[RMDB]
RNA sequence: GGGAACGACUCGAGUAGAGUCGAAAAUGUAACCACUGAAAGGUCUCAGCGCUUGCAGUUGCGCUUUGUGCCAGUUAUGCAAGAAGAUGGCCAGUACACUUACAAAACCCGGUUCCAAUUGGCAGUGCCUACUACUUUCUUUCGAGAAAGUAGUAGGAAAAGAAACAACAACAACAAC
Reactivity to 2A3 in 0.01 (KOAc 150mM, MgCl2 10mM, bicine 150mM(pH8.5), 24C), signal-to-noise 7, nucleotides 027 to 126: u110g020u020a040a030c020c010a030c080u070g090a110a060a070g040g000u020c020u010c060a050g040c060g030c080u030u090g020c040a070g040u070u050g030c050g040c000u060u100u180g110u100g010c000c000a010g010u110u130a090u120g010c030a020a020g020a040a020g040a150u140g020g000c010c000a000g020u040a020c040a010c040u080u090a030c030a020a100a040a090c000c020c000g020g020u070u000c030c010a110a120u060u040g060g020c040a040g080u020g110
Reactivity to DMS in 0.01 (KOAc 150mM, MgCl2 10mM, bicine 150mM(pH8.5), 24C), signal-to-noise 9, nucleotides 027 to 126: u000g010u010a070a100c090c080a090c130u000g010a070a140a130g000g010u000c030u000c060a080g020c170g010c030u000u010g020c060a040g000u000u000g000c140g020c020u000u010u000g010u010g020c010c010a050g000u010u000a100u000g000c040a030a040g000a100a060g000a070u000g010g010c020c020a060g000u000a100c080a070c100u000u000a060c060a040a050a090a150c030c020c010g010g000u000u000c020c040a060a110u000u010g000g010c060a060g010u010g010
Chemical mapping of a 177-nucleotide RNA with 2A3 and DMS. For 2A3, 12,568 sequencing reads were counted.